Background:
Structure probing data (DMS and 2A3) for a 177-nucleotide construct. The DMS profile rests on 3,410 reads. Reactivities are rounded to 0.1 and cut off at 0 and 3. It was measured as part of the RMDB library 15KREP. DMS adducts were read by reverse transcription with MarathonRT.
[RMDB]
RNA sequence: GGGAACGACUCGAGUAGAGUCGAAAAACUUGCCCCUUUGCUAAGGGUGAUAGCUGUUCUUCUAAUUGCAAACAUUCAGUUGCUCAGUUGGUUAGUUACCUUUCUGAACGCUGUAAUGUUAUUGCUGCGUAAUUUUAUCGUUCGCGAUAAAAUUACGAAAAGAAACAACAACAACAAC
Reactivity to DMS in 0.01 (KOAc 150mM, MgCl2 10mM, bicine 150mM(pH8.5), 24C), signal-to-noise 2, nucleotides 027 to 126: a080c070u000u000g010c100c010c010c020u000u000u010g010c190u010a110a060g010g000g030u010g010a120u010a020g020c030u000g010u000u000c050u010u000c100u000a100a090u010u010g010c010a040a030a050c000a010u000u000c000a020g000u000u020g050c000u000c000a020g020u000u010g000g000u000u010a170g010u010u020a080c000c000u000u000u010c000u000g010a000a010c000g000c010u000g000u000a000a000u000g010u000u000a060u010u000g030c030u000g000
Reactivity to 2A3 in 0.01 (KOAc 150mM, MgCl2 10mM, bicine 150mM(pH8.5), 24C), signal-to-noise 3, nucleotides 027 to 126: a000c030u020u100g010c020c010c010c000u030u050u160g080c090u090a020a020g010g020g020u070g090a080u060a040g010c030u030g040u070u010c030u070u010c010u070a090a090u150u080g000c010a000a010a010c000a020u020u020c010a010g030u080u170g260c000u010c000a000g010u010u010g040g010u020u040a040g020u080u100a050c000c000u020u110u060c000u000g000a020a000c010g000c010u030g010u290a020a000u000g020u020u010a060u090u010g000c020u030g000